[RMDB]
RNA sequence: GGGAACGACUCGAGUAGAGUCGAAAAGGCCCUUCAGAAAGCAUUCCCGGCUUUUGAGGUUGAAUCACAGCAGGUCACACCUAAUGACCAUGCUAAUGCCAGAGCUUUUUCGCAUCUGGCCACAAAGUUUUCGGGCUAAUUUCGAUUAGCCCGAAAAAAAAGAAACAACAACAACAAC
Reactivity to DMS in 0.01 (KOAc 150mM, MgCl2 10mM, bicine 150mM(pH8.5), 24C), signal-to-noise 1, nucleotides 027 to 126: g010g010c040c000c000u050u010c130a280g000a090a000a000g030c000a120u010u020c000c000c000g000g000c010u010u000u020u030g000a040g000g000u000u000g030a090a270u000c010a050c200a050g000c020a020g000g030u000c000a050c040a130c300c140u000a120a130u020g000a060c000c000a170u000g000c000u010a220a010u030g030c010c000a000g000a020g010c000u000u000u000u000u130c190g050c000a030u010c000u000g000g030c000c110a000c300a030a150a240g000

The record gives the reactivity of an RNA of 177 nucleotides to DMS. DMS adducts were read by reverse transcription with MarathonRT. The data come from the RNA Mapping Database (RMDB), library RFM100. Values cover nucleotides 27 to 126.